[RMDB]
RNA sequence: GGGAACGACUCGAGUAGAGUCGAAAACUACCUGCGCGAGUUCGGCAACCUGGUGUUCCACUUCGCGCUGCUGGGUCUGCUGGUGGCGGUGGCCGUCGGCAAGCUGUUCGGCUACGAGGGCAACGUGUCAUGACCUUAUGUUCGCAUAAGGUCAUGAAAAAGAAACAACAACAACAAC
Reactivity to 2A3 in 0.01 (KOAc 150mM, MgCl2 10mM, bicine 150mM(pH8.5), 24C), signal-to-noise 4, nucleotides 027 to 126: c030u050a070c000c020u030g030c010g000c010g000a020g020u150u180c100g070g000c120a010a020c000c040u160g260g000u230g010u080u000c020c010a010c020u120u150c020g010c030g000c010u010g000c010u030g010g040g030u080c030u040g000c010u020g010g040u050g030g000c030g110g110u120g130g030c010c020g030u020c010g000g010c010a030a020g010c020u070g070u170u100c030g020g000c010u040a030c060g010a080g030g010g030c020a070a040c070g060u100g050
Reactivity to DMS in 0.01 (KOAc 150mM, MgCl2 10mM, bicine 150mM(pH8.5), 24C), signal-to-noise 4, nucleotides 027 to 126: c090u020a110c080c020u000g010c020g010c020g010a030g010u000u000c150g030g000c140a050a040c030c030u010g010g010u020g020u000u000c000c010a060c040u010u000c030g000c050g010c020u000g000c060u010g010g000g010u010c050u010g010c030u000g010g010u010g010g010c020g010g010u010g000g020c020c020g010u000c010g010g000c050a050a060g010c030u000g000u000u000c040g010g010c020u010a070c100g000a090g000g000g010c050a070a060c110g000u000g000

The record gives the reactivity of an RNA of 177 nucleotides to 2A3 and DMS. For 2A3, 6,603 sequencing reads were counted. The reactions ran in a buffer of 150 mM KOAc, 10 mM MgCl2 and 150 mM bicine (pH 8.5), at 24 C. For 2A3 the reverse transcriptase was SuperScript II with manganese. The data come from the RNA Mapping Database (RMDB), library OK2TRN.